[RMDB]
RNA sequence: GGGAACGACUCGAGUAGAGUCGAAAAACUCCUAUUCCAACACGUCCUCGUCGUACAGAGUGGUAACAUGUGUCACCACAUAUCCAAGCUUGGGUAGACGGGCUUGACCCAACCCCUUGGGCGGAUGAAAACCAGAUUACGUUCGCGUAAUCUGGAAUCUACAAGAUCCGUUCGCGGAUCUUGUAGAAAAAGAAACAACAACAACAAC
Reactivity to 2A3 in 0.01 (KOAc 150mM, MgCl2 10mM, bicine 150mM(pH8.5), 24C), signal-to-noise 2, nucleotides 027 to 156: a000c080u070c030c020u080a080u070u070c040c060a020a030c060a040c070g070u070c020c040u080c060g080u000c030g040u150a120c050a040g110a020g080u040g030g010u020a040a060c050a140u260g070u050g050u150c030a030c050c020a040c010a140u140a010u010c000c010a000a000g010c000u010u030g020g000g000u010a010g010a010c030g000g000g010c010u070u230g040a150c000c000c000a020a050c020c000c000c000u020u010g010g000g000c000g000g000a040u090g040a020a000a050a030c010c000a000g000a000u000u000a010c000g000u020u040c200g000c000g150u000a010a000u010c020u000g020g040a000a020
Reactivity to DMS in 0.01 (KOAc 150mM, MgCl2 10mM, bicine 150mM(pH8.5), 24C), signal-to-noise 1, nucleotides 027 to 156: a000c080u010c030c020u000a010u000u000c030c000a020a100c110a090c100g000u000c000c010u000c060g000u000c070g000u000a160c050a080g000a110g010u000g000g030u000a010a000c100a140u030g020u000g010u000c040a060c060c030a100c040a150u020a070u000c020c010a090a300g000c170u000u000g010g000g030u000a300g000a050c130g010g010g030c000u020u010g010a300c020c000c000a300a060c020c010c010c060u100u000g000g110g030c130g000g020a080u000g000a050a020a210a140c000c000a040g030a020u000u020a000c000g020u000u000c300g050c040g090u000a000a010u020c000u000g000g000a000a030
The record gives the reactivity of an RNA of 207 nucleotides to 2A3 and DMS.
Conditions: 150 mM KOAc, 10 mM MgCl2 and 150 mM bicine (pH 8.5), 24 C.
It was measured as part of the RMDB library M2RFPK.
For 2A3, 1,328 sequencing reads were counted.